The record gives the reactivity of an RNA of 207 nucleotides to 2A3 and DMS. DMS adducts were read by reverse transcription with MarathonRT. The reactions ran in a buffer of 150 mM KOAc, 10 mM MgCl2 and 150 mM bicine (pH 8.5), at 24 C. For 2A3, 4,045 sequencing reads were counted. 2A3 adducts were read by reverse transcription with SuperScript II with manganese. For DMS, 4,342 sequencing reads were counted. It was measured as part of the RMDB library M2RFPK.
RNA sequence: GGGAACGACUCGAGUAGAGUCGAAAAACGGUGCGGAAGUUCGCGCUUCCGUGAAACGCGAAAAUCGGACGGUGGCUGCAAGUCGCAUCGCAUAACCGCGGCAAGUGGAGUUAGCGAGAGGAGGCUGAAACCAUCCAACACUUCGGUGUUGGAUGAACUUAGUUGUGAUGUUCGCAUCACAACUAAGAAAAGAAACAACAACAACAAC
Reactivity to 2A3 in 0.01 (KOAc 150mM, MgCl2 10mM, bicine 150mM(pH8.5), 24C), signal-to-noise 4, nucleotides 027 to 156: a000c030g020g020u040g010c010g000g010a040a020g040u100u140c070g040c020g000c060u030u000c010c010g000u020g030a100a090a000c090g030c030g090a040a030a010a110u100c020g020g030a030c020g010g040u000g050g000c060u090g000c040a050a040g020u010c030g010c030a010u060c020g000c030a040u090a120a010c010c030g020c020g040g000c050a130a060g030u070g060g020a060g010u060u110a030g030c020g020a010g010a030g070g020a020g030g000c040u040g020a090a000a000c030c000a000u000c000c000a000a000c000a000c010u030u110c220g110g000u000g010u000u000g000g000a000u000g000a000a010
Reactivity to DMS in 0.01 (KOAc 150mM, MgCl2 10mM, bicine 150mM(pH8.5), 24C), signal-to-noise 2, nucleotides 027 to 156: a000c010g010g020u020g020c000g010g020a060a080g030u000u010c190g050c260g000c010u000u010c030c090g040u000g000a080a060a040c020g020c000g000a060a040a110a130u000c050g000g000a120c020g040g020u010g020g000c020u030g000c080a050a090g020u010c030g030c020a130u000c030g050c040a110u000a090a080c050c040g020c040g000g010c040a060a090g030u000g010g010a100g030u000u000a060g000c030g020a050g010a050g020g000a050g010g030c030u000g000a080a050a150c120c010a040u010c000c000a000a000c010a000c010u000u000c300g060g030u000g000u000u020g010g010a010u000g030a020a070